[RMDB]
Chemical mapping of a 207-nucleotide RNA with DMS and 2A3.
DMS adducts were read by reverse transcription with MarathonRT.
RNA sequence: GGGAACGACUCGAGUAGAGUCGAAAAUGUGCUAUUAUGUCAUUUGUUGUGCGUACAGCAAGUGGCACAACUUUCACUAUGAACGCUCAUAGUGGAAGUGAUUGUUGUGCGUACAGCAGGUGGUACAACUUUCACUAUGAUGCGUCAUAGUGGAAAACGAGUCGACUGUGUUCGCACAGUCGAUUCGAAAAGAAACAACAACAACAAC
Reactivity to DMS in 0.01 (KOAc 150mM, MgCl2 10mM, bicine 150mM(pH8.5), 24C), signal-to-noise 4, nucleotides 027 to 156: u010g030u000g020c040u000a100u000u000a040u000g010u000c010a010u000u000u000g020u000u010g020u000g010c300g030u000a080c020a030g020c000a030a040g030u000g030g000c040a040c050a040a060c070u000u010u000c010a010c000u000a010u000g000a050a120c200g010c180u000c000a010u000a010g030u000g020g000a000a010g010u010g010a080u000u000g020u000u000g020u000g000c110g030u010a080c040a070g010c030a080g000g030u000g000g040u000a080c050a080a080c090u000u000u000c000a020c000u010a010u000g010a020u000g020c210g020u000c000a020u000a010g010u000g000g010a000a010a090a240
Reactivity to 2A3 in 0.01 (KOAc 150mM, MgCl2 10mM, bicine 150mM(pH8.5), 24C), signal-to-noise 6, nucleotides 027 to 156: u140g020u040g040c060u070a060u210u060a060u120g020u010c010a010u000u010u010g000u000u000g010u010g040c060g040u110a010c000a000g000c010a000a020g030u030g080g000c030a010c010a020a020c000u000u000u000c000a000c000u000a000u000g020a110a020c040g000c060u010c000a000u000a000g000u000g000g000a000a000g010u010g020a020u030u010g000u000u010g000u000g010c000g000u030a020c000a000g000c000a000g010g020u050g020g000u010a020c010a030a020c020u000u000u000c000a000c000u000a000u000g000a010u110g010c060g020u000c000a000u000a000g000u000g010g000a000a000a000a010
It was measured as part of the RMDB library OK3TST. Reactivities are given for positions 27 through 156. The reactions ran in a buffer of 150 mM KOAc, 10 mM MgCl2 and 150 mM bicine (pH 8.5), at 24 C. High DMS reactivity at an A or C suggests that its Watson-Crick edge is free. The 2A3 profile rests on 14,179 reads.